This 177-nucleotide RNA was probed chemically with DMS and 2A3. The DMS profile rests on 3,160 reads. It was measured as part of the RMDB library OK1LIB. Reactivities are given for positions 27 through 126. The reactions ran in a buffer of 150 mM KOAc, 10 mM MgCl2 and 150 mM bicine (pH 8.5), at 24 C.

[RMDB]
RNA sequence: GGGAACGACUCGAGUAGAGUCGAAAAUGACCAGAUCUAUAGCAGAGAUGCAUAUGGAACACCCACCCUUGGGGAUAACCAGAUUCUUCAAAGAGCUCGGUUACAAGAUCGCAAAAAAGAAGGGAUCCCAUUAUCCGUCAUUCGUGACGGAUAAUGGAAAAGAAACAACAACAACAAC
Reactivity to DMS in 0.01 (KOAc 150mM, MgCl2 10mM, bicine 150mM(pH8.5), 24C), signal-to-noise 3, nucleotides 027 to 126: u030g030a170c040c010a110g010a050u000c020u000a090u020a050g000c000a030g000a180g010a170u000g000c020a100u000a050u010g020g000a110a090c170a120c020c030c010a130c070c040c010u000u020g040g000g000g000a090u010a040a090c030c100a040g010a080u020u000c010u000u070c200a030a080a060g020a040g000c080u000c110g000g000u030u020a050c160a050a090g000a080u010c050g000c100a010a000a070a060a090a060g000a060a060g000g000g000a090u020c060
Reactivity to 2A3 in 0.01 (KOAc 150mM, MgCl2 10mM, bicine 150mM(pH8.5), 24C), signal-to-noise 7, nucleotides 027 to 126: u160g050a050c020c000a010g010a100u010c010u060a040u060a040g010c040a020g020a010g000a100u060g040c020a220u040a050u100g000g030a040a040c030a100c030c000c010a070c010c010c010u050u060g000g010g010g050a080u040a030a030c010c000a050g030a300u080u010c010u140u110c070a150a220a020g040a020g020c010u030c090g030g000u010u020a030c020a100a060g030a110u070c070g040c180a050a070a060a050a010a000g110a030a040g040g010g010a030u040c000
For DMS the reverse transcriptase was MarathonRT.